[RMDB]
Chemical mapping of a 207-nucleotide RNA with 2A3.
Conditions: 150 mM KOAc, 10 mM MgCl2 and 150 mM bicine (pH 8.5), 24 C.
The data come from the RNA Mapping Database (RMDB), library M2RFPK.
2A3 is a SHAPE reagent: it acylates the 2'-hydroxyl of flexible nucleotides of all four kinds.
Values cover nucleotides 27 to 156.
RNA sequence: GGGAACGACUCGAGUAGAGUCGAAAAGGGUGAGACCUAGGAACCGUAGGGGCAUUCUCAAAGGAAGCUUUUGCAGUGACGCCCAUGUAAGUGGGAUAUAACAACAGAACUCGUAUGAGUAGCCUAAUAAAUCGGACCUUCUUCGGAAGGUCCGAAACAUGGCAACUAACUUCGGUUAGUUGCCAUGAAAAGAAACAACAACAACAAC
Reactivity to 2A3 in 0.01 (KOAc 150mM, MgCl2 10mM, bicine 150mM(pH8.5), 24C), signal-to-noise 1, nucleotides 027 to 156: g020g010g000u020g020a180g070a050c010c000u040a050g000g120a050a080c060c030g080u160a090g010g040g000g000c000a070u130u000c040u020c080a060a080a030g140g000a070a120g020c020u030u040u180u150g010c050a050g010u010g040a010c060g000c000c000c000a000u070g050u110a110a080g020u020g010g000g000a010u050a000u020a110a100c110a000a070c020a040g100a060a010c010u020c020g010u130a070u150g020a000g030u030a010g070c000c000u060a090a020u170a160a080a000u020c000g010g000a000c000c000u010u000c000u010u000c090g050g000a000a010g020g020u000c000c000g000a000a000a000